[RMDB]
RNA sequence: GGGAACGACUCGAGUAGAGUCGAAAAUGAAAUAGACAUUCUCUGCAACGAAAUAACCGCUUUCUCCUUAGCAACAAUACUUCCUGAUUCUAGUAGCCUUAUCAAUGAAGGCAAUGCGUUCUCAGAGAUAAGCCAGUUUUCGCAUCCGCCUGAUUCACGUAAAUGCGACUUUCGAGUCGCAUUUACGAAAAGAAACAACAACAACAAC
Reactivity to 2A3 in 0.01 (KOAc 150mM, MgCl2 10mM, bicine 150mM(pH8.5), 24C), signal-to-noise 1, nucleotides 027 to 156: u180g000a000a010a040u210a030g080a010c060a050u120u000c060u050c030u060g050c110a080a020c040g090a100a040a080u120a030a090c010c010g020c000u080u110u050c040u000c010c000u070u000a020g100c080a000a090c040a250a230u060a170c020u070u000c000c050u150g010a090u090u110c090u170a060g020u060a030g110c010c000u030u060a050u180c140a180a140u300g020a050a030g020g020c020a000a050u050g030c010g030u080u000c030u020c040a040g100a050g000a230u080a050a010g000c040c000a020g030u050u000u000u000c040g000c020a000u030c070c080g040c000c070u060g100a080u130u180c010a010